[RMDB]
RNA sequence: GGGAACGACUCGAGUAGAGUCGAAAAAGUGGUAUAUACGUAUACCACAUGCGAUGAUGAGUGAUGGGCGAACCGACCGGUGAGGAAGGAAAGGUGAUCGCUGAGCACGCCGAUUACGAUCGGCGAACGGACCAUACGUAUUCGUACGUAUGGUCCGAAAAGAAACAACAACAACAAC
Reactivity to DMS in 0.01 (KOAc 150mM, MgCl2 10mM, bicine 150mM(pH8.5), 24C), signal-to-noise 3, nucleotides 027 to 126: a070g000u040g000g000u000a000u010a040u000a040c210g010u000a000u000a010c000c000a010c030a050u030g010c090g010a140u030g040a120u010g000a090g000u000g000a030u000g000g000g000c030g000a130a120c050c030g010a170c050c050g030g040u040g000a160g000g000a060a210g000g000a020a050a110g000g020u040g010a070u010c050g010c030u010g000a090g000c160a230c010g030c010c020g000a010u010u010a140c180g000a040u000c000g000g000c000g010a040a090
Reactivity to 2A3 in 0.01 (KOAc 150mM, MgCl2 10mM, bicine 150mM(pH8.5), 24C), signal-to-noise 6, nucleotides 027 to 126: a000g000u000g010g020u000a000u000a010u010a030c250g060u000a000u010a010c010c010a000c030a020u100g020c030g100a100u060g010a040u050g030a050g080u100g020a070u100g030g040g000c030g010a040a020c000c020g050a060c020c020g040g090u270g050a060g060g050a070a060g030g010a110a070a020g060g040u060g040a060u020c010g000c040u010g000a010g050c060a010c060g000c000c000g000a010u060u040a090c230g070a030u010c000g000g000c000g000a030a010
Notes
An RNA of 177 nucleotides, treated with DMS and 2A3 and read out base by base. It was measured as part of the RMDB libraries RFM100 and RFMREP. For DMS the reverse transcriptase was MarathonRT. The RNA was probed in 150 mM KOAc, 10 mM MgCl2 and 150 mM bicine (pH 8.5) at 24 C.